[RMDB]
The record gives the reactivity of an RNA of 177 nucleotides to DMS and 2A3. 2A3 adducts were read by reverse transcription with SuperScript II with manganese. For DMS, 3,182 sequencing reads were counted. It was measured as part of the RMDB library RFM100. The reactions ran in a buffer of 150 mM KOAc, 10 mM MgCl2 and 150 mM bicine (pH 8.5), at 24 C.

RNA sequence: GGGAACGACUCGAGUAGAGUCGAAAACUCAUAUGAUGAGGAAAUUAAACGGCGAUAUUGUACUUUCAUUAUCCCUACUUCUUAAUCUCUGAAAGUAUGUAUAUAAAAAUAAUGAAAGUGAAUGAGGUAUACGAUUUGUGUUCGCACAAAUCGUAUAAAAAGAAACAACAACAACAAC
Reactivity to DMS in 0.01 (KOAc 150mM, MgCl2 10mM, bicine 150mM(pH8.5), 24C), signal-to-noise 2, nucleotides 027 to 126: c020u000c020a060u030a080u060g030a060u000g000a020g000g000a070a100a080u030u020a080a100a130c150g010g010c070g010a070u030a060u040u010g000u030a040c030u000u000u020c010a000u000u000a000u000c050c000c050u000a010c020u000u010c030u010u010a100a080u060c140u030c160u020g000a090a070a030g000u000a010u010g010u010a080u010a090u060a030a040a040a090a010u000a010a010u000g000a000a010a000g000u000g030a050a030u000g000a050g030g000
Reactivity to 2A3 in 0.01 (KOAc 150mM, MgCl2 10mM, bicine 150mM(pH8.5), 24C), signal-to-noise 4, nucleotides 027 to 126: c020u020c020a040u140a070u220g150a060u060g010a030g000g150a030a090a060u180u140a100a060a060c060g100g030c060g050a020u030a020u170u130g120u120a010c000u020u010u000c000a000u000u030a010u010c010c030c020u000a040c010u040u010c000u010u110a180a260u130c080u040c080u140g050a070a010a060g020u020a040u190g010u010a090u020a000u090a240a120a010a040a000u050a010a000u010g010a010a010a000g000u010g030a030a080u070g010a030g080g020